[RMDB]
RNA sequence: GGGAACGACUCGAGUAGAGUCGAAAAGAUAUGGAAAGACUGAGCGAUAAGGUUUGGGUCGGAAACGACCCAACGACCUUUUGACGCUCAGGUCUUUCCUAAGUCAAAACAGACCUUCGGGUCUGAAUCCUUAUACCAGGUUCGCCUGGUAUAAGGAAAAAGAAACAACAACAACAAC
Reactivity to 2A3 in 0.01 (KOAc 150mM, MgCl2 10mM, bicine 150mM(pH8.5), 24C), signal-to-noise 3, nucleotides 027 to 126: g000a000u050a020u120g000g000a000a010a010g010a020c000u000g000a000g010c030g110a150u070a290a030g000g030u030u050u030g040g010g000u010c010g020g000a060a030a010c010g020a010c010c030c020a000a010c020g000a030c000c000u030u050u130u290g290a150c060g000c010u000c000a000g010g010u000c000u000u010u030c000c000u000a010a010g010u000c010a000a000a170a210c000a000g010a000c010c010u100u190c300g130g010g010u000c000u000g000a030a100
Reactivity to DMS in 0.01 (KOAc 150mM, MgCl2 10mM, bicine 150mM(pH8.5), 24C), signal-to-noise 3, nucleotides 027 to 126: g010a020u010a300u000g000g010a010a020a020g000a050c000u000g000a010g020c000g050a160u010a020a020g000g000u000u000u000g000g000g030u000c010g020g000a030a050a110c000g000a010c000c000c000a010a010c300g000a050c000c000u000u000u010u000g010a250c070g010c000u010c010a000g010g010u000c010u000u000u000c000c010u000a000a070g000u010c010a110a100a130a240c000a000g010a020c000c000u000u010c260g020g020g020u000c010u000g000a100a080
The record gives the reactivity of an RNA of 177 nucleotides to 2A3 and DMS. The 2A3 profile rests on 5,297 reads. For 2A3 the reverse transcriptase was SuperScript II with manganese. For DMS, 3,651 sequencing reads were counted. The reactions ran in a buffer of 150 mM KOAc, 10 mM MgCl2 and 150 mM bicine (pH 8.5), at 24 C.